[RMDB]
RNA sequence: GGGAACGACUCGAGUAGAGUCGAAAAGCAACUCGGUUCGCCGAGUUGCAAAUAAAAUCAGCGGUAAUUUCGAGGCGUAAAUUACCGCUGAACGCCUCGAUAAAAGUCUUCAGUUCGCUGAAGACAACUAUCGGUAUACGUUCGCGUAUACCGAUAGAAAAGAAACAACAACAACAAC
Reactivity to DMS in 0.01 (KOAc 150mM, MgCl2 10mM, bicine 150mM(pH8.5), 24C), signal-to-noise 4, nucleotides 027 to 126: g010c020a000a000c010u000c000g010g000u000u010c220g010c010c000g000a020g020u000u000g010c000a010a020a030u000a070a070a120a110u000c000a020g000c000g010g010u010a020a010u000u010u000c040g000a160g010g010c160g020u000a010a010a010u000u000a010c000c010g000c000u000g000a010a020c170g010c030c010u010c170g020a110u010a050a100a150a130g000u000c000u000u000c000a000g010u010u010c260g000c010u010g000a010a010g010a000c010a020a070
Reactivity to 2A3 in 0.01 (KOAc 150mM, MgCl2 10mM, bicine 150mM(pH8.5), 24C), signal-to-noise 6, nucleotides 027 to 126: g010c000a000a000c000u000c010g020g040u070u100c200g030c080c000g000a010g000u010u000g000c000a000a000a000u020a000a020a000a060u020c000a000g000c010g000g010u000a010a010u020u010u030c070g050a170g240g200c090g090u080a010a010a010u000u010a000c000c000g000c000u000g000a000a000c010g040c000c020u050c060g020a030u120a260a130a020a030g000u000c000u000u000c000a010g030u030u090c170g030c090u010g000a010a000g000a000c000a020a000

This 177-nucleotide RNA was probed chemically with DMS and 2A3. It was measured as part of the RMDB library M2PK50. Reactivities are given for positions 27 through 126. The reactions ran in a buffer of 150 mM KOAc, 10 mM MgCl2 and 150 mM bicine (pH 8.5), at 24 C. 2A3 adducts were read by reverse transcription with SuperScript II with manganese. The 2A3 profile rests on 11,056 reads.